This 170-nucleotide RNA was probed chemically with 2A3.
RNA sequence: GGGAACGACUCGAGUAGAGUCGAAAAACCACUCAAACUUUUUGCUGCUGAGACUUUACGUGCCACUGAAGAGGCGUCUAAGCAGUCUUAUGCUAUUGCCACCAUCAAAGAAAUUGUUGGUGAGCGCCCGGGGUCCCGUUCGCGGGACCCAAAAGAAACAACAACAACAAC
Reactivity to 2A3 in 0.01 (KOAc 150mM, MgCl2 10mM, bicine 150mM(pH8.5), 24C), signal-to-noise 2, nucleotides 027 to 129: a000c000c000a020c010u160c030a120a100a150c000u040u010u000u290u300g000c000u000g000c000u020g000a000g000a050c010u150u130u130a050c110g090u050g030c010c000a070c000u150g000a000a000g020a170g070g010c010g050u010c000u000a000a000g030c030a000g010u000c020u000u040a110u090g050c000u080a030u070u240g010c000c030a000c000c000a000u050c000a000a090a140g020a130a100a130u110u000g010u000u000g000g000u030g030a020g030c000g040c000c000c000g060